[RMDB]
RNA sequence: GGGAACGACUCGAGUAGAGUCGAAAAGUGGUGCGCGGAGAGGGUAACCACCGGCGCGCGUCACUGAUAUAUCCACCGGGGGGAAAGGGGAGAAAAGGAUACAGCGCGACGAAGUUAGCACGCUGCCGAAAUGUACCCACAUUCGUGUGGGUACAAAUACUACUUAUGAAUUCGUUCAUAAGUAGUAAAAAGAAACAACAACAACAAC
Reactivity to DMS in 0.01 (KOAc 150mM, MgCl2 10mM, bicine 150mM(pH8.5), 24C), signal-to-noise 2, nucleotides 027 to 156: g010u000g020g030u000g000c000g020c010g020g010a140g000a200g020g040g030u020a090a150c100c090a080c000c000g010g000c000g020c000g020c050g010u000c000a020c030u000g000a150u000a190u010a080u000c020c010a140c030c020g000g000g060g040g030g000a040a050a060g000g000g020g010a110g010a060a070a090a120g000g010a210u000a070c020a050g020c010g030c010g000a210c040g000a080a150g040u000u000a110g010c040a060c030g050c010u000g010c000c040g010a060a110a100u000g020u000a000c000c010c000a020c000a110u000u010c280g010u000g070u000g000g020g000u000a000c010a000a060a170
Reactivity to 2A3 in 0.01 (KOAc 150mM, MgCl2 10mM, bicine 150mM(pH8.5), 24C), signal-to-noise 3, nucleotides 027 to 156: g020u010g000g000u020g010c020g000c020g020g080a160g060a090g120g090g010u100a100a090c070c030a050c070c010g070g010c010g010c000g000c020g020u010c000a000c000u000g000a000u030a000u010a010u200c010c010a030c070c030g030g000g000g000g010g000a060a000a030g010g020g020g020a040g030a010a100a000a030g060g000a020u120a120c020a040g010c010g020c030g100a100c040g030a110a010g040u060u080a030g060c020a000c080g020c030u050g010c020c000g050a060a060a010u060g000u000a000c000c030c000a000c000a010u040u080c190g070u080g000u000g010g000g000u000a000c000a000a000a000